[RMDB]
RNA sequence: GGGAACGACUCGAGUAGAGUCGAAAAGGACGAUAACAUCUUGGGGAUGCUCUUCCGUGACCGCAUAGGCACCUACAAGGUCAAUGUCUUCAUGGCCUUCCAGGACUGACCGUGCCCGCACAGGCUUUAGCGCCCUGUAAAUGGGGAACACUGUACACACGUCUUGUAGAUUCGUCUACAAGACGUGAAAAGAAACAACAACAACAAC
Reactivity to DMS in 0.01 (KOAc 150mM, MgCl2 10mM, bicine 150mM(pH8.5), 24C), signal-to-noise 1, nucleotides 027 to 156: g040g000a040c000g030a190u000a060a130c050a030u000c020u000u000g000g100g020g000a090u000g020c010u000c040u010u000c090c010g020u010g000a180c140c050g000c060a090u000a100g020g000c020a080c020c000u000a060c110a080a060g000g040u010c000a030a080u000g000u000c080u050u020c070a120u000g000g010c010c010u010u010c040c030a080g030g020a060c050u000g000a040c020c020g010u000g000c020c050c010g050c070a030c020a080g000g000c040u000u000u020a070g010c080g040c030c010c030u000g020u000a010a080a180u000g000g030g020g020a030a070c030a090c030u010g020u010a090c070a270
Reactivity to 2A3 in 0.01 (KOAc 150mM, MgCl2 10mM, bicine 150mM(pH8.5), 24C), signal-to-noise 3, nucleotides 027 to 156: g040g020a010c040g010a060u100a110a070c050a070u030c070u110u070g000g020g030g000a030u030g030c030u020c010u160u000c060c000g050u030g060a120c000c110g000c070a070u150a140g010g000c020a010c020c000u080a090c070a110a030g010g000u000c030a060a090u120g070u080c060u240u150c150a060u110g020g000c020c000u020u030c040c030a020g000g070a030c130u050g030a080c050c000g030u020g020c000c000c000g040c020a000c010a020g010g000c000u040u120u110a060g050c070g080c020c020c000u020g070u110a080a130a080u160g030g000g000g010a010a030c040a010c070u070g080u140a050c010a000
Annotation:
Structure probing data (DMS and 2A3) for a 207-nucleotide construct. The DMS profile rests on 3,043 reads. DMS adducts were read by reverse transcription with MarathonRT. For 2A3 the reverse transcriptase was SuperScript II with manganese. The RNA was probed in 150 mM KOAc, 10 mM MgCl2 and 150 mM bicine (pH 8.5) at 24 C.